[RMDB]
RNA sequence: GGGAACGACUCGAGUAGAGUCGAAAAGGCACUCAUGGACACCCAUAGAACUCCACGAGUUCACGGUAAAUCUGAUUCACAGAUGUGAACUGAAUACCGUGGAGAAGUGUCCUUCUAUGGGAGUGCAGCAGAGCUGAACAUUCGUGUUCGGCUCUGCAAAAGAAACAACAACAACAAC
Reactivity to DMS in 0.01 (KOAc 150mM, MgCl2 10mM, bicine 150mM(pH8.5), 24C), signal-to-noise 5, nucleotides 027 to 126: g000g020c030a010c010u000c050a120u010g010g000a100c170a130c080c020c000a000u000a010g000a030a030c090u000c200c000a000c000g000a230g010u000u000c000a010c000g010g000u000a020a120a090u000c010u000g000a180u000u000c010a010c000a250g000a080u010g010u000g000a000a020c010u000g000a050a140u000a030c050c010g010u010g000g000a000g000a060a220g000u000g000u000c120c220u000u000c000u000a000u010g000g010g000a020g010u000g020c000a140
Reactivity to 2A3 in 0.01 (KOAc 150mM, MgCl2 10mM, bicine 150mM(pH8.5), 24C), signal-to-noise 3, nucleotides 027 to 126: g070g000c010a000c030u030c030a100u180g050g000a010c000a030c000c000c000a010u000a000g000a010a010c020u030c040c000a000c010g000a020g180u000u000c010a000c000g000g000u030a050a080a080u000c010u000g090a300u020u030c010a020c020a080g300a300u290g120u000g000a010a000c000u010g000a020a010u030a060c010c010g000u000g000g010a010g000a010a010g000u010g010u030c010c000u000u000c000u000a000u010g000g000g000a000g010u010g030c000a010